This 207-nucleotide RNA was probed chemically with 2A3. The RNA was probed in 150 mM KOAc, 10 mM MgCl2 and 150 mM bicine (pH 8.5) at 24 C. For 2A3 the reverse transcriptase was SuperScript II with manganese. Values cover nucleotides 27 to 156.

RNA sequence: GGGAACGACUCGAGUAGAGUCGAAAAAUAUUAAAACCAUUCUGAAUGUGGAAAAAUUGUGUCCAAUUAUAUUCUAUAAUAUCAUACCGUAUGUAAUUGUGUUCCUGCCCAAGUAUGUCAGCUUGGCAGAACGGAUGGUCCACAGUGCAAUUCAGAGCUUCACGUAUGUGUUCGCACAUACGUGAAGAAAAGAAACAACAACAACAAC
Reactivity to 2A3 in 0.01 (KOAc 150mM, MgCl2 10mM, bicine 150mM(pH8.5), 24C), signal-to-noise 2, nucleotides 027 to 156: a000u040a050u040u070a030a000a080a030c030c010a030u040u000c010u010g030a030a030u130g000u050g020g050a060a170a100a100a100u120u140g030u000g010u020c000c000a000a000u120u020a030u060a010u090u020c050u040a080u150a300a150u200a160u290c030a040u040a160c050c060g020u020a030u070g020u000a060a060u070u030g010u010g010u100u000c040c010u010g020c040c030c080a010a010g010u070a040u110g300u110c020a020g020c020u010u000g000g040c010a000g000a020a030c060g000g010a010u060g000g000u000c000c000a050c030a100g070u090g100c020a010a100u030u030c030a030g000a000g060